[RMDB]
RNA sequence: GGGAACGACUCGAGUAGAGUCGAAAAUCGCGUUAUUCCGAAGCCUACCUCUUGAGGUAAGAUUAGAGGAGAGCGUGAGGACACUUAACGAGUUUCGAGGUAUCGAGAAACGGUGGAAGAGUGUGAUAGAUGGUUUAGCACUUACGAGUGACAAGUAAGAUACUAGUCGUUUCGACGACUAGUAUCUAAAAGAAACAACAACAACAAC
Reactivity to DMS in 0.01 (KOAc 150mM, MgCl2 10mM, bicine 150mM(pH8.5), 24C), signal-to-noise 2, nucleotides 027 to 156: u000c010g000c050g000u010u000a100u010u010c000c000g020a220a170g000c020c020u020a040c000c010u010c130u000u010g040a080g050g010u020a020a030g010a130u010u000a050g010a300g010g000a130g010a040g010c040g100u010g010a080g000g000a150c090a070c070u000u020a060a060c050g000a080g020u000u000u000c020g010a160g030g010u000a110u010c060g000a100g010a070a060a000c020g000g010u000g000g000a110a140g020a080g010u000g030u000g000a120u000a080g030a140u010g020g020u000u010u010a210g020c020a010c040u000u000a070c080g000a190g010u010g020a180c060a000a130g040u000a050
Reactivity to 2A3 in 0.01 (KOAc 150mM, MgCl2 10mM, bicine 150mM(pH8.5), 24C), signal-to-noise 3, nucleotides 027 to 156: u020c000g000c000g050u010u040a110u200u000c010c060g010a030a010g020c030c000u070a120c050c000u100c050u110u290g110a030g020g050u070a080a040g040a080u100u150a030g020a020g030g010a020g000a000g000c110g050u020g010a020g010g020a020c020a000c070u100u130a090a030c010g030a040g080u020u000u060c020g020a040g040g050u130a120u240c060g000a030g020a060a050a000c040g030g040u050g010g070a130a030g040a010g050u040g010u020g010a020u120a120g050a030u100g030g030u060u030u080a020g010c000a000c000u060u120a010c160g090a030g040u050g030a040c010a010a020g060u060a090
This 207-nucleotide RNA was probed chemically with DMS and 2A3. The RNA was probed in 150 mM KOAc, 10 mM MgCl2 and 150 mM bicine (pH 8.5) at 24 C. For 2A3, 1,574 sequencing reads were counted. For DMS the reverse transcriptase was MarathonRT. 2A3 adducts were read by reverse transcription with SuperScript II with manganese.